[RMDB]
This 177-nucleotide RNA was probed chemically with 2A3 and DMS. For 2A3 the reverse transcriptase was SuperScript II with manganese.
RNA sequence: GGGAACGACUCGAGUAGAGUCGAAAAGCGUGAUUAGGGAUAAUUAUUAAUCUGUAAUCCCGCGAAUAGAACAGGGCCCAAUUAUUAAACGGGGCCCAUGGACGAAUUUUAAGUCCCCACACGCGAAAUCAUAUACUAUGUUCGCAUAGUAUAUGAUAAAAGAAACAACAACAACAAC
Reactivity to 2A3 in 0.01 (KOAc 150mM, MgCl2 10mM, bicine 150mM(pH8.5), 24C), signal-to-noise 4, nucleotides 027 to 126: g000c010g000u000g020a040u010u060a030g040g000g010a010u030a170a050u190u230a110u210u130a180a050u050c010u030g300u080a010a010u010c010c010c010g000c000g000a030a070u130a060g060a060a030c050a070g000g000g000c000c000c000a020a050u140u160a070u080u190a150a140a030c060g000g020g000g000c020c000c000a000u010g000g000a000c010g010a040a040u040u110u120u210a190a030g020u030c000c000c000c010a080c000a020c040g120c020g030a170a090
Reactivity to DMS in 0.01 (KOAc 150mM, MgCl2 10mM, bicine 150mM(pH8.5), 24C), signal-to-noise 6, nucleotides 027 to 126: g010c010g010u000g000a050u000u000a040g010g010g010a020u010a070a170u010u010a150u000u000a110a040u010c020u000g010u000a040a040u000c000c040c020g030c040g000a090a080u000a120g010a080a250c070a060g010g020g000c000c000c000a090a090u000u000a140u000u010a060a090a090c290g010g000g010g000c010c010c000a010u010g000g000a170c050g020a100a100u010u010u010u000a040a200g010u000c010c000c020c130a060c150a030c110g000c100g000a090a120
In probing experiments dimethyl sulfate is read out at A N1 and C N3, which are open when not base-paired. The reactions ran in a buffer of 150 mM KOAc, 10 mM MgCl2 and 150 mM bicine (pH 8.5), at 24 C.